[RMDB]
Structure probing data (DMS and 2A3) for a 207-nucleotide construct.

RNA sequence: GGGAACGACUCGAGUAGAGUCGAAAACAAUGAUUCUUCGGAAUCAUUGAAAAACCGUAGGAUAUGAUGACCGGGAGCACUAGUAUUCGAAAGAGUACAGGGUGCAUCGAUCGCAAGUAUCCUAAACGGAAAAAACUUGUUCGUUCGCGAACAAGAAGUCACUUUAAGGGUUCGCCCUUAAAGUGACAAAAGAAACAACAACAACAAC
Reactivity to DMS in 0.01 (KOAc 150mM, MgCl2 10mM, bicine 150mM(pH8.5), 24C), signal-to-noise 1, nucleotides 027 to 156: c000a000a000u000g010a000u000u000c000u000u020c300g000g000a000a000u000c010a010u030u010g000a040a160a080a150a160c030c000g000u000a110g020g040a000u000a000u000g000a250u000g000a040c000c030g010g000g000a260g090c000a010c000u000a300g040u000a030u000u000c000g020a140a150a300g000a030g020u000a010c000a120g000g000g020u000g000c000a010u000c010g020a000u000c020g000c030a060a300g010u000a000u010c000c010u010a040a010a120c020g010g000a000a110a050a030a050a180c000u000u000g000u000u000c010g130u000u000c300g000c060g000a030a000c010a000a000g000a090a110
Reactivity to 2A3 in 0.01 (KOAc 150mM, MgCl2 10mM, bicine 150mM(pH8.5), 24C), signal-to-noise 3, nucleotides 027 to 156: c000a010a000u000g010a000u000u010c010u050u070c260g030g000a000a010u000c000a000u000u000g010a090a000a010a020a010c010c000g010u020a010g010g010a000u010a000u150g070a030u170g000a020c020c020g030g040g010a220g000c000a000c010u030a020g010u000a000u000u010c010g040a110a040a040g000a030g010u020a000c010a080g300g000g000u010g000c010a010u020c010g020a010u020c020g000c090a120a100g010u000a010u000c000c000u020a100a080a010c030g000g000a060a030a010a140a000a030c000u000u020g000u010u000c010g030u030u040c300g000c000g110a010a000c010a000a000g030a030a020
The data come from the RNA Mapping Database (RMDB), library RNAMAK. For 2A3 the reverse transcriptase was SuperScript II with manganese.